[RMDB]
RNA sequence: GGGAACGACUCGAGUAGAGUCGAAAAACUAGUAUGUACAGGGGUGAGUUGACCUGUCAUCUAGACUGCUGACCAUCAACUCACCGGUCAGCUGGAUGAGGUCCACAGAGUACGACAUCAGUACUCAGAGUAAGGAUGCGUUCGCGUAUCUUUACUCAAAAGAAACAACAACAACAAC
Reactivity to 2A3 in 0.01 (KOAc 150mM, MgCl2 10mM, bicine 150mM(pH8.5), 24C), signal-to-noise 9, nucleotides 027 to 126: a010c010u010a010g040u090a050u060g040u070a000c010a010g020g020g020g050u090g060a080g030u040u060g060a050c000c010u010g010u000c000a000u000c000u010a020g060a090c030u040g000c010u010g000a000c010c000a010u090c030a030a070c040u020c060a050c020c020g000g000u000c000a000g000c010u010g010g010a040u070g050a030g000g040u040c000c000a030c020a040g000a000g000u010a000c030g090a030c090a170u140c040a040g010u000a000c000u010c010a010
Reactivity to DMS in 0.01 (KOAc 150mM, MgCl2 10mM, bicine 150mM(pH8.5), 24C), signal-to-noise 9, nucleotides 027 to 126: a230c000u000a010g000u050a010u000g010u060a010c010a020g010g000g000g010u010g000a050g010u010u000g000a050c020c010u000g000u000c000a000u000c000u000a020g000a190c060u000g000c010u000g000a010c000c070a030u020c130a050a040c100u010c080a070c210c160g000g000u000c010a000g000c000u000g000g010a050u020g010a110g000g000u010c010c020a080c190a100g000a010g000u000a000c000g010a130c190a100u040c140a090g000u000a000c000u000c000a110

The record gives the reactivity of an RNA of 177 nucleotides to 2A3 and DMS. It was measured as part of the RMDB library OK1LIB. For DMS, 60,067 sequencing reads were counted. Conditions: 150 mM KOAc, 10 mM MgCl2 and 150 mM bicine (pH 8.5), 24 C. The 2A3 profile rests on 63,666 reads.